[RMDB]
Source: RMDB library RNAMAK, as collected in RNAgym. An RNA of 207 nucleotides, treated with 2A3 and DMS and read out base by base. The RNA was probed in 150 mM KOAc, 10 mM MgCl2 and 150 mM bicine (pH 8.5) at 24 C. Reactivities are given for positions 27 through 156.
RNA sequence: GGGAACGACUCGAGUAGAGUCGAAAAAGAAUCUUCGGAUUCUCUGAACGGGGUCGAGCGACAUGACGGAGCUUUUGACGCUCUGAAGCCUCCACGGAGCGAUAAGCUCCUCAACAGCGCUCGACGGAGGCACCCUUAAGCUCGUGUUCGCACGAAAACAUCCUUUCCUUUUCGAAGGAAAGGAUGUAAAAGAAACAACAACAACAAC
Reactivity to 2A3 in 0.01 (KOAc 150mM, MgCl2 10mM, bicine 150mM(pH8.5), 24C), signal-to-noise 4, nucleotides 027 to 156: a000g020a020a000u050c040u070u110c280g110g000a010u020u010c010u050c070u170g090a200a060c120g080g040g050g000u000c010g000a000g000c000g150a220c100a240u070g030a070c200g000g000a000g010c020u130u110u090u210g190a070c060g000c000u000c000u000g010a050a040g000c010c000u000c010c000a020c000g010g000a000g000c010g000a020u010a140a000g010c000u000c010c000u000c030a020a030c010a020g030c000g000c000u010c000g000a000c010g000g000a000g010g000c010a060c020c020c000u080u200a130a050g050c060u040c030g010u010g050u050u090c250g000c110a020c030g050a000a220a010
Reactivity to DMS in 0.01 (KOAc 150mM, MgCl2 10mM, bicine 150mM(pH8.5), 24C), signal-to-noise 2, nucleotides 027 to 156: a000g000a070a000u000c010u000u000c300g070g010a040u020u000c010u020c020u010g000a110a140c050g000g000g030g040u010c000g010a060g000c020g030a300c070a200u020g000a120c170g000g010a010g010c010u010u030u000u020g010a200c130g030c000u000c020u030g010a020a130g010c000c000u000c000c010a300c050g010g030a000g030c000g010a120u000a090a110g020c000u040c000c010u000c110a020a080c030a150g040c010g030c000u000c010g020a010c040g030g000a020g080g020c010a110c050c000c020u000u000a080a190g020c090u010c060g030u000g000u010u010c170g000c020a100c030g010a090a040a140